[RMDB]
RNA sequence: GGGAACGACUCGAGUAGAGUCGAAAAGUCAGGAUGUUCGAUGUGGUCCCCAACCCGGCCUGGGUGGCGCGGCCGGGCAAGUACGCGCAUAGCCAUGAGGCGGGGCGUUCGGUCGAUGUGACGUUUGAGCAAUAAUAAAGUUCGCUUUAUUAUUGCUAAAAGAAACAACAACAACAAC
Reactivity to DMS in 0.01 (KOAc 150mM, MgCl2 10mM, bicine 150mM(pH8.5), 24C), signal-to-noise 9, nucleotides 027 to 126: g010u000c050a070g000g010a100u000g010u000u000c040g010a070u000g020u000g010g010u000c020c010c010c060a100a150c020c010c010g010g010c020c010u010g010g010g030u000g010g000c030g030c180g000g000c010c010g000g000g010c080a030a090g010u010a050c080g010c050g010c060a090u000a150g010c030c040a100u000g010a110g020g020c040g010g010g000g000c080g010u000u000c050g010g010u000c030g010a080u000g010u000g010a090c070g000u000u000u010g000
Reactivity to 2A3 in 0.01 (KOAc 150mM, MgCl2 10mM, bicine 150mM(pH8.5), 24C), signal-to-noise 6, nucleotides 027 to 126: g070u040c030a020g060g060a120u090g050u120u080c030g030a050u090g060u090g100g050u050c010c010c000c000a030a070c000c000c010g040g000c000c010u070g040g020g040u070g040g000c040g000c010g020g000c010c010g000g000g000c000a040a020g020u040a030c030g000c010g010c060a050u090a070g010c030c010a060u110g030a040g060g020c040g000g010g010g000c010g010u050u070c040g020g020u030c020g010a060u080g050u050g090a040c040g020u040u070u110g080